[RMDB]
RNA sequence: GGGAACGACUCGAGUAGAGUCGAAAAGAAAUGCCAGCAUUUAUGAUCAACAAUGCAUCAGCUGGAGCAAACUAUAUGUUUGCUUAAUAACUACUUAGUUUAGUUAUAGUAUUUCACGCAUUAUAGAUAUUUUAGGCUUUAUUUAUAAUCGUAUUACCUACCCUUCAGUCUUCGGACUGAAGGGUAGAAAAGAAACAACAACAACAAC
Reactivity to 2A3 in 0.01 (KOAc 150mM, MgCl2 10mM, bicine 150mM(pH8.5), 24C), signal-to-noise 3, nucleotides 027 to 156: g000a020a030a000u030g000c000c000a000g000c030a050u020u070u220a140u270g020a000u040c040a030a300c090a230a180u160g080c060a020u050c010a000g020c000u010g000g000a010g000c010a000a000a000c010u060a020u070a050u300g000u000u000u000g000c000u000u010a010a000u010a000a000c000u030a000c030u190u180a020g090u260u080u000a000g000u000u000a030u010a020g050u010a060u010u030u030c010a000c010g000c010a000u000u000a030u010a010g010a000u030a040u020u100u070u130a090g070g000c010u100u060u020a010u000u020u000a010u010a000a010u000c010g000u020a070u060u180a060c010